This 177-nucleotide RNA was probed chemically with 2A3 and DMS. It was measured as part of the RMDB library M2PK50. The 2A3 profile rests on 2,827 reads.

RNA sequence: GGGAACGACUCGAGUAGAGUCGAAAAGGCUCCACCUUCGGGUGGAGCCAUCUACGGAGAAAGCACCUCGGUAUAAAAGUGCAACCCUUGGAAACAAGGGAAUAAGCCCCUGGUUCGCCAGGGGCAAACUCGUAAUAUCGUUCGCGAUAUUACGAGUAAAAGAAACAACAACAACAAC
Reactivity to 2A3 in 0.01 (KOAc 150mM, MgCl2 10mM, bicine 150mM(pH8.5), 24C), signal-to-noise 2, nucleotides 027 to 126: g020g000c000u000c000c010a000c000c010u010u080c270g060g000g020u000g010g010a000g010c010c000a000u000c000u020a010c000g040g010a030g010a030a110a040g030c000a010c010c000u030c030g000g040u180a110u040a210a030a010a010g000u000g010c010a040a120c000c000c000u000u000g000g020a020a040a040c000a000a000g000g000g030a010a010u030a030a010g010c010c000c000c000u010g020g050u020u030c170g050c060c020a010g000g020g010g000c010a000a000
Reactivity to DMS in 0.01 (KOAc 150mM, MgCl2 10mM, bicine 150mM(pH8.5), 24C), signal-to-noise 3, nucleotides 027 to 126: g010g030c000u010c010c000a000c000c010u000u000c240g040g010g060u000g000g010a000g000c000c000a000u010c000u000a120c070g010g010a030g010a110a070a170g010c010a010c000c000u000c010g020g030u010a130u010a020a060a020a060g020u010g000c010a150a190c000c000c000u010u000g000g000a140a100a220c000a010a000g010g000g010a080a020u000a080a160g000c010c000c000c000u000g000g000u000u020c200g020c000c000a000g010g000g000g000c010a000a030
In probing experiments dimethyl sulfate is read out at A N1 and C N3, which are open when not base-paired.